An RNA of 177 nucleotides, treated with 2A3 and read out base by base. Reactivities are given for positions 27 through 126. The reactions ran in a buffer of 150 mM KOAc, 10 mM MgCl2 and 150 mM bicine (pH 8.5), at 24 C. Source: RMDB library RFM100, as collected in RNAgym. The 2A3 profile rests on 523 reads.
RNA sequence: GGGAACGACUCGAGUAGAGUCGAAAAUACUCCUAAACAAAGUAGUAACAAUUUUCAUUUCGUUUCCGGUUUCUUAGAUCGAAUAUUAUUCUGAGGAAAUUCCCUGAUUACAUAUCAGGGAAAGGUUCUUAUAACUCGCUUUCGAGCGAGUUAUAAGAAAAGAAACAACAACAACAAC
Reactivity to 2A3 in 0.01 (KOAc 150mM, MgCl2 10mM, bicine 150mM(pH8.5), 24C), signal-to-noise 2, nucleotides 027 to 126: u020a000c010u000c010c000u100a100a100a020c120a070a240a040g030u070a000g070u080a040a020c020a220a160u060u060u070u020c050a040u190u170u110c020g000u010u030u000c010c000g080g000u010u040u020c000u000u050a050g000a110u050c060g040a070a050u060a100u300u060a090u150u100c020u100g010a000g000g120a050a170a080u000u000c000c000c010u030g000a010u040u020a110c060a090u270a010u070c010a000g000g020g000a000a000a000g000g000u010u040